[RMDB]
RNA sequence: GGGAACGACUCGAGUAGAGUCGAAAAUCGAUGUUCGCAUCGAGGUUUCACCUUUGUGUAGCGACUAUCCAAGGGAGGAAAAAAAGUAGCCCAUUGGGCUACCCGAAGAACUUGGACGAAUCGCUACACUCUGGUCACUCAGCGUAUUCGUACGCAAAUAAACUCUUACAUUCGUGUAAGAGUUUAUAAAAGAAACAACAACAACAAC
Reactivity to DMS in 0.01 (KOAc 150mM, MgCl2 10mM, bicine 150mM(pH8.5), 24C), signal-to-noise 2, nucleotides 027 to 156: u000c010g020a010u010g010u000u010c210g020c010a030u000c000g010a040g000g010u000u000u000c070a060c000c010u000u020u010g020u000g030u000a010g010c000g040a100c030u000a180u000c010c000a000a050g040g010g030a300g020g040a050a010a110a090a220a060a120g000u010a030g010c010c030c010a300u000u000g040g090g030c010u000a000c020c040c020g000a130a100g020a120a210c010u000u010g010g000a060c050g020a060a050u000c000g010c010u020a010c020a010c010u000c020u000g030g000u000c090a090c050u000c050a140g020c010g010u000a040u000u000c210g020u010a010c040g000c030a040a160
Reactivity to 2A3 in 0.01 (KOAc 150mM, MgCl2 10mM, bicine 150mM(pH8.5), 24C), signal-to-noise 3, nucleotides 027 to 156: u080c000g000a000u030g030u160u070c220g000c140a020u010c000g010a020g020g040u030u100u150c030a020c000c000u000u010u000g000u010g000u000a000g000c010g010a010c030u080a030u010c000c000a000a000g010g010g020a030g020g030a060a190a000a130a040a070a050g010u000a010g000c000c000c160a300u180u300g010g000g000c010u010a010c000c010c020g100a150a060g020a050a010c000u000u000g000g000a000c020g110a120a270u010c010g000c000u000a000c000a000c000u020c000u010g000g010u020c020a030c070u140c080a020g020c000g020u030a030u050u080c160g050u030a010c020g000c000a080a080
An RNA of 207 nucleotides, treated with DMS and 2A3 and read out base by base. For 2A3, 2,322 sequencing reads were counted. Values cover nucleotides 27 to 156. 2A3 adducts were read by reverse transcription with SuperScript II with manganese. The data come from the RNA Mapping Database (RMDB), library RNAMAK. The reactions ran in a buffer of 150 mM KOAc, 10 mM MgCl2 and 150 mM bicine (pH 8.5), at 24 C. DMS (dimethyl sulfate) methylates the pairing face of unpaired adenines and cytosines. The DMS profile rests on 3,115 reads.